[RMDB]
RNA sequence: GGGAACGACUCGAGUAGAGUCGAAAAUCACUAUAAACAUAGUACAUCAUGUUUUUAUAUGGUAUGCCUGUGGCAUCCCUUACUAUAACGGAUUGUUCGUUGUGUAUGUAACAUGCGAGGAGAAUGUAAAAAAUACUGGCCAGAAUUACAAUUAUUGUAUAUUCGUAUCUUUCGAGAUACGAAUAUAAAAAGAAACAACAACAACAAC
Reactivity to 2A3 in 0.01 (KOAc 150mM, MgCl2 10mM, bicine 150mM(pH8.5), 24C), signal-to-noise 3, nucleotides 027 to 156: u070c000a010c070u140a070u110a110a090a000c030a030u060a080g110u150a090c010a100u160c040a070u090g060u010u030u030u070u020a150u050a040u080g000g000u030a000u020g000c010c110u300g070u260g090g000c000a010u030c000c000c000u040u050a030c050u060a070u070a210a030c050g220g050a200u050u070g020u020u020c070g010u000u010g000u020g000u020a030u110g000u000a040a000c030a040u090g030c070g020a060g020g030a060g060a090a070u050g010u180a070a040a030a000a000a120u090a030c040u030g050g000c020c030a050g060a110a030u080u050a050c070a040a090u170u150a070u170u180g020
Reactivity to DMS in 0.01 (KOAc 150mM, MgCl2 10mM, bicine 150mM(pH8.5), 24C), signal-to-noise 2, nucleotides 027 to 156: u000c060a090c050u000a110u000a120a160a130c040a080u000a110g020u000a050c050a060u010c020a040u010g020u000u000u000u000u000a070u010a030u020g010g050u000a070u000g030c050c040u010g060u000g000g020c070a100u000c010c000c010u000u000a050c100u000a100u000a080a120c080g020g010a160u000u010g010u010u000c080g050u000u000g000u000g040u000a090u000g000u000a050a070c040a090u000g000c030g020a110g040g010a000g010a080a080u000g030u010a000a020a070a090a050a150u000a050c070u010g020g010c040c040a090g000a070a060u000u000a060c010a050a150u000u000a110u000u000g000
An RNA of 207 nucleotides, treated with 2A3 and DMS and read out base by base. Reactivities are given for positions 27 through 156. For 2A3, 903 sequencing reads were counted. It was measured as part of the RMDB library OK3TST. For 2A3 the reverse transcriptase was SuperScript II with manganese. The RNA was probed in 150 mM KOAc, 10 mM MgCl2 and 150 mM bicine (pH 8.5) at 24 C. The DMS profile rests on 3,270 reads.